The record gives the reactivity of an RNA of 207 nucleotides to DMS and 2A3. For 2A3, 4,495 sequencing reads were counted.
[RMDB]
RNA sequence: GGGAACGACUCGAGUAGAGUCGAAAAGAGGGAAAAGAUGAUGAAUGUUGCCUCAAUAACUACACUGCUACGGUGUGUAAUCCACAAUGGUCACAAUGGUUAUGGAAGCUAUAUAAUGGUAGUUUUAAAGGUAUCUACACUUAUGCUUACGAUGAUGCGAUAUGUGUGGAUUCGUCCACACAUAUCGAAAAGAAACAACAACAACAAC
Reactivity to DMS in 0.01 (KOAc 150mM, MgCl2 10mM, bicine 150mM(pH8.5), 24C), signal-to-noise 3, nucleotides 027 to 156: g000a100g030g010g000a100a070a060a090g020a110u000g020a110u000g010a120a120u000g000u000u000g030c010c020u000c050a100a060u000a040a040c020u000a080c030a070c060u010g030c040u000a050c060g020g020u020g000u010g030u000a080a090u000c040c010a040c070a050a080u000g020g010u000c050a080c030a060a110u000g010g010u000u010a060u000g030g000a040a070g020c010u000a080u000a110u000a070a090u010g010g030u010a050g020u000u000u000u010a040a080a100g010g000u000a050u000c020u010a030c050a050c050u000u000a100u000g000c040u000u000a060c070g020a090u000g010a160u010g010
Reactivity to 2A3 in 0.01 (KOAc 150mM, MgCl2 10mM, bicine 150mM(pH8.5), 24C), signal-to-noise 7, nucleotides 027 to 156: g040a000g060g050g050a060a070a010a070g110a100u160g010a030u100g080a130a050u100g020u100u070g060c010c010u030c030a020a040u090a030a000c030u070a010c060a020c050u070g040c060u120a060c100g010g000u010g000u010g000u050a030a070u040c020c000a040c050a090a150u120g010g030u050c030a010c030a080a110u080g040g030u080u050a040u050g030g020a020a020g010c020u020a020u010a010u040a240a110u110g060g000u010a040g020u000u020u020u170a090a130a010g060g000u040a050u040c020u030a010c040a020c030u030u060a060u130g030c010u040u060a040c040g100a090u130g010a020u140g080

Description
The DMS profile rests on 7,613 reads. The reactions ran in a buffer of 150 mM KOAc, 10 mM MgCl2 and 150 mM bicine (pH 8.5), at 24 C.